[RMDB]
Notes:
The record gives the reactivity of an RNA of 177 nucleotides to DMS and 2A3. Source: RMDB library TTRDEL, as collected in RNAgym. For 2A3 the reverse transcriptase was SuperScript II with manganese. Values cover nucleotides 27 to 126. For DMS the reverse transcriptase was MarathonRT. The RNA was probed in 150 mM KOAc, 10 mM MgCl2 and 150 mM bicine (pH 8.5) at 24 C.
RNA sequence: GGGAACGACUCGAGUAGAGUCGAAAAGAUAUGGAUCAGGUGUUGCUCGAAGAACUCGGAAACGAGGGAGAGCAUAGCACUGAUCCUAAGUCAAAGUUACCUUCCUAGUUCGCUAGGAAGGUAACAAGAUCCGUACUGUCUUCGGACAGUACGGAUCAAAAGAAACAACAACAACAAC
Reactivity to DMS in 0.01 (KOAc 150mM, MgCl2 10mM, bicine 150mM(pH8.5), 24C), signal-to-noise 2, nucleotides 027 to 126: g000a030u000a300u000g010g000a000u000c000a000g000g000u000g000u000u000g010c000u000c010g000a120a160g000a150a150c000u000c000g020g000a170a060a140c000g000a000g040g000g000a070g030a030g010c010a010u010a090g040c010a090c000u000g000a000u000c000c000u000a020a110g000u000c040a090a050a200g000u000u000a000c000c000u010u000c000c000u000a010g020u000u020c220g040c010u000a040g010g000a040a000g000g000u000a000a000c000a040a070
Reactivity to 2A3 in 0.01 (KOAc 150mM, MgCl2 10mM, bicine 150mM(pH8.5), 24C), signal-to-noise 2, nucleotides 027 to 126: g040a040u090a030u150g000g000a020u010c020a030g090g200u050g010u120u030g000c010u030c020g280a300a060g010a050a030c010u010c030g000g060a080a060a040c010g000a010g020g000g000a040g010a000g010c020a010u020a000g000c030a040c120u000g010a000u000c000c000u010a120a000g020u010c050a130a010a080g000u000u000a000c010c000u000u000c000c000u010a020g010u040u070c300g000c150u000a000g020g000a000a000g010g000u000a000a000c000a000a000